[RMDB]
RNA sequence: GGGAACGACUCGAGUAGAGUCGAAAAACAGCGAAAGGCACAAGACUUCGAACAUUAUAGCAGUUAGUAGUUGCCUAAAACCAUUGCAAUAUAUGGGACAGUAGAGGUCGCAAGCCUAUACUGUGCGAAAAGUCGCAAGGUUUCGACCUUGCGACAACAAGCACAGAAUGUUCGCAUUCUGUGCUUGAAAAGAAACAACAACAACAAC
Reactivity to DMS in 0.01 (KOAc 150mM, MgCl2 10mM, bicine 150mM(pH8.5), 24C), signal-to-noise 3, nucleotides 027 to 156: a060c040a110g030c020g000a090a080a080g030g030c030a090c060a140a180g040a040c020u000u000c040g030a140a030c050a120u000u010a140u000a130g020c080a060g010u010u010a100g020u000a210g000u010u010g000c010c030u000a000a040a120a080c000c010a010u010u000g000c060a120a120u000a100u000a000u000g010g000g000a070c020a050g010u000a060g000a010g070g020u000c050g030c300a090a210g010c000c010u020a040u000a030c020u000g020u000g040c080g000a080a040a050a130g000u000c000g000c000a020a020g010g000u000u000u020c300g000a030c020c010u000u000g010c010g010a010c010a020a030
Reactivity to 2A3 in 0.01 (KOAc 150mM, MgCl2 10mM, bicine 150mM(pH8.5), 24C), signal-to-noise 6, nucleotides 027 to 156: a000c040a020g060c050g090a170a040a050g020g030c010a020c040a080a070g030a040c030u040u050c080g060a110a050c040a110u180u140a150u200a140g070c060a020g020u030u110a030g030u060a030g010u120u060g010c010c010u050a040a070a010a000c000c000a000u000u030g000c010a030a000u030a000u010a010u170g000g040g020a000c000a000g010u020a000g000a010g000g000u090c050g030c180a060a000g010c000c000u000a000u000a000c000u000g000u020g030c010g040a110a100a010a040g010u010c000g000c000a000a000g030g000u020u080u150c200g020a040c000c000u000u000g000c000g000a000c000a000a000